[RMDB]
An RNA of 207 nucleotides, treated with 2A3 and DMS and read out base by base.
RNA sequence: GGGAACGACUCGAGUAGAGUCGAAAAGUCUGUGCGUUUCCAUUUGAGUAUCCUGAAAACGGGCUUUUCAGCAUGGAACCUACAUAUUAAAUAGUAGGAGUGCAUAGUGGCCCGUAUAGCAGGCAUUGAGGCGAGGAUUGUUUCGACAAUCCUCGAAUCUAGAAGAGAGAUUCGUCUCUCUUCUAGAAAAAGAAACAACAACAACAAC
Reactivity to 2A3 in 0.01 (KOAc 150mM, MgCl2 10mM, bicine 150mM(pH8.5), 24C), signal-to-noise 4, nucleotides 027 to 156: g050u030c080u080g080u060g060c040g010u000u030u010c040c030a070u090u050u070g050a060g060u160a090u120c010c030u020g030a040a040a030a020c010g010g000g010c010u080u090u110u080c050a000g000c010a010u010g080g060a110a060c000c000u010a010c030a020u220a070u150u300a140a140a150u150a080g020u000a000g000g040a030g000u010g000c010a030u050a180g090u070g030g000c000c000c000g000u000a000u000a000g000c000a000g020g010c010a020u040u160g080a060g020g110c020g000a000g000g010a000u000u010g030u050u070u070c050g030a010c000a000a000u000c000c000u000c000g000a000a000
Reactivity to DMS in 0.01 (KOAc 150mM, MgCl2 10mM, bicine 150mM(pH8.5), 24C), signal-to-noise 3, nucleotides 027 to 156: g000u000c020u020g020u010g020c080g030u000u000u000c000c020a200u020u000u010g010a180g000u030a070u010c020c020u000g000a070a070a140a070c020g050g020g030c020u010u010u000u010c070a300g000c010a040u000g000g000a160a180c010c000u000a010c010a130u000a200u000u000a100a140a300u000a130g010u000a030g000g010a090g020u000g000c020a150u010a150g050u000g010g020c000c000c000g030u000a020u000a080g010c010a020g020g000c120a100u000u000g000a130g000g030c030g020a040g020g010a020u000u000g010u000u000u000c250g010a090c000a020a010u000c000c000u000c000g000a000a040

The data come from the RNA Mapping Database (RMDB), library M2RFPK.
The 2A3 profile rests on 2,882 reads.
Reactivities are rounded to 0.1 and cut off at 0 and 3.
2A3 is a SHAPE reagent: it acylates the 2'-hydroxyl of flexible nucleotides of all four kinds.